This 170-nucleotide RNA was probed chemically with DMS and 2A3. Conditions: 150 mM KOAc, 10 mM MgCl2 and 150 mM bicine (pH 8.5), 24 C. For DMS, 82,577 sequencing reads were counted. It was measured as part of the RMDB library 15KLIB.
RNA sequence: GGGAACGACUCGAGUAGAGUCGAAAAGAACAGAAGUGUUGCAUGUGCAAUAGACGCGCUGCAGCGUACUCUUCACCUCUGCAAUCUUAUGCCUGCUGGACUCAUUCCUGCGGUUAUGAUUAUGUCUAACGAAUGAUGUUCGCAUCAUUCAAAAGAAACAACAACAACAAC
Reactivity to DMS in 0.01 (KOAc 150mM, MgCl2 10mM, bicine 150mM(pH8.5), 24C), signal-to-noise 9, nucleotides 027 to 129: g040a110a130c030a030g020a110a040g040u030g010u010u040g010c010a030u050g030u040g010c170a090a100u070a040g030a040c090g010c010g030c110u030g050c100a090g000c030g030u040a100c040u020c060u020u020c030a010c030c010u010c040u000g000c070a000a000u020c080u030u000a050u040g030c060c030u000g030c030u000g000g000a030c190u000c110a120u020u010c000c050u020g000c120g010g010u000u000a040u050g010a090u010u050a050u050g020u000c040u000a060a130c210
Reactivity to 2A3 in 0.01 (KOAc 150mM, MgCl2 10mM, bicine 150mM(pH8.5), 24C), signal-to-noise 9, nucleotides 027 to 129: g050a070a010c060a030g100a110a020g070u050g020u120u010g000c020a040u210g000u010g030c030a020a080u080a160g090a060c050g030c010g000c080u160g020c050a030g010c010g000u090a170c010u000c000u020u030c000a010c000c000u000c020u040g020c020a030a050u030c010u070u110a070u180g030c010c030u090g010c030u060g010g010a040c040u040c180a110u180u070c010c000u020g010c020g000g030u050u060a060u100g070a040u040u110a080u190g080u010c040u030a040a040c090